An RNA of 207 nucleotides, treated with 2A3 and read out base by base. Values cover nucleotides 27 to 156. The data come from the RNA Mapping Database (RMDB), library VIROID. For 2A3, 465 sequencing reads were counted.
[RMDB]
RNA sequence: GGGAACGACUCGAGUAGAGUCGAAAAUUUCACUCUGUAGCUGGAAUCCCUGUUGCGCUUGCUGGCGAAACCUGCAGGGAAGCUAGCUGGGUCCCGCUAGUCGAGCGGACUCGUCCCAGCGGUCCCAACCAGUUUUCUUUAUCCUAUUUUUCCCUGCCACUCACUCAUACUUCGGUAUGAGUGAGUGAAAAGAAACAACAACAACAAC
Reactivity to 2A3 in 0.01 (KOAc 150mM, MgCl2 10mM, bicine 150mM(pH8.5), 24C), signal-to-noise 1, nucleotides 027 to 156: u110u080u130c070a080c000u140c040u130g210u270a030g010c030u020g040g040a110a190u080c000c000c000u000g010u000u040g060c060g010c060u050u300g150c090u110g100g000c060g000a180a140a040c020c060u070g000c010a010g010g000g010a000a000g010c040u000a040g040c010u040g000g000g040u000c080c050c000g000c040u070a070g160u180c100g040a000g010c080g040g070a170c010u040c180g030u040c020c020c040a010g010c020g000g060u070c030c080c000a020a040c010c010a020g000u120u060u100u160c100u070u200u040a150u080c020c110u070a240u180u080u000u030u010c000c000c000u030g040c010